[RMDB]
Conditions: 150 mM KOAc, 10 mM MgCl2 and 150 mM bicine (pH 8.5), 24 C. Structure probing data (2A3 and DMS) for a 177-nucleotide construct. The 2A3 profile rests on 5,228 reads. Source: RMDB library OK2TRN, as collected in RNAgym.
RNA sequence: GGGAACGACUCGAGUAGAGUCGAAAAAGAAGUGGAUUAGUGGCGCACGGGUGAGUAAGGUAUAGUUAAUCUGCCCUACACAAGAGGACAACAGUUGGAAACGACUGCUAAUACUCUAUACUCCUGCUAAUGACAGGUUAUUCGUAACCUGUCAUUAAAAAGAAACAACAACAACAAC
Reactivity to 2A3 in 0.01 (KOAc 150mM, MgCl2 10mM, bicine 150mM(pH8.5), 24C), signal-to-noise 4, nucleotides 027 to 126: a000g150a060a010g040u070g030g040a090u080u150a070g050u030g060g000c020g020c040a020c030g050g010g010u050g010a070g010u030a040a020g020g020u060a050u070a190g070u070u070a050a050u070c010u040g020c000c000c020u050a030c080a000c010a040a050g010a020g020g010a010c020a050a000c010a060g020u020u010g010g010a040a050a020c020g010a010c010u000g000c000u020a040a030u070a120c010u020c000u030a030u030a060c030u020c030c020u020g030c020
Reactivity to DMS in 0.01 (KOAc 150mM, MgCl2 10mM, bicine 150mM(pH8.5), 24C), signal-to-noise 8, nucleotides 027 to 126: a080g010a090a070g020u000g010g010a080u010u000a070g030u000g000g020c080g010c080a060c110g000g010g020u000g010a090g020u010a040a050g010g020u000a060u010a080g000u000u000a080a110u010c060u010g010c030c010c010u010a050c120a080c180a100a040g000a030g000g000a110c140a070a050c010a010g010u010u000g010g010a090a090a190c020g000a010c000u000g000c020u000a090a070u000a110c020u000c010u000a120u000a100c110u000c020c040u000g010c160